The record gives the reactivity of an RNA of 177 nucleotides to DMS and 2A3.
The DMS profile rests on 20,339 reads.
2A3 adducts were read by reverse transcription with SuperScript II with manganese.
Conditions: 150 mM KOAc, 10 mM MgCl2 and 150 mM bicine (pH 8.5), 24 C.
Reactivities are rounded to 0.1 and cut off at 0 and 3.
DMS adducts were read by reverse transcription with MarathonRT.
RNA sequence: GGGAACGACUCGAGUAGAGUCGAAAAGAAGAUAAGAGACCAGACACCGUGGGCAGAUGACAAGAAAGUCCGUCGGUGCCGGUAAGGUCGUCAGUCACAGGCGACCGUUUUCUGUGACUCUAAAGAAAGCUACCAUAGUAUUCGUACUAUGGUAGCUAAAAGAAACAACAACAACAAC
Reactivity to DMS in 0.01 (KOAc 150mM, MgCl2 10mM, bicine 150mM(pH8.5), 24C), signal-to-noise 8, nucleotides 027 to 126: g000a030a020g000a060u000a130a100g000a190g000a060c010c010a110g030a080c000a000c010c000g040u010g000g000g010c000a030g010a150u030g020a180c300a120a110g000a100a180a090g000u000c010c000g010u020c010g010g010u010g010c020c050g010g000u000a060a060g010g000u000c000g000u000c000a060g020u020c240a100c250a080g010g000c000g000a010c000c010g000u000u000u010u000c000u000g000u030g010a130c020u010c020u010a040a130a120g000a060a080
Reactivity to 2A3 in 0.01 (KOAc 150mM, MgCl2 10mM, bicine 150mM(pH8.5), 24C), signal-to-noise 5, nucleotides 027 to 126: g100a020a010g070a020u140a070a080g030a000g020a080c000c020a010g020a020c010a000c010c000g000u040g020g020g000c010a020g060a240u160g060a160c060a060a050g080a160a070a000g040u010c000c020g100u120c010g020g000u000g000c010c000g040g060u080a070a040g000g010u000c010g000u000c000a040g140u130c040a030c010a090g010g000c000g010a000c000c010g000u060u070u040u000c000u040g060u090g050a040c020u000c020u060a060a080a040g160a030a140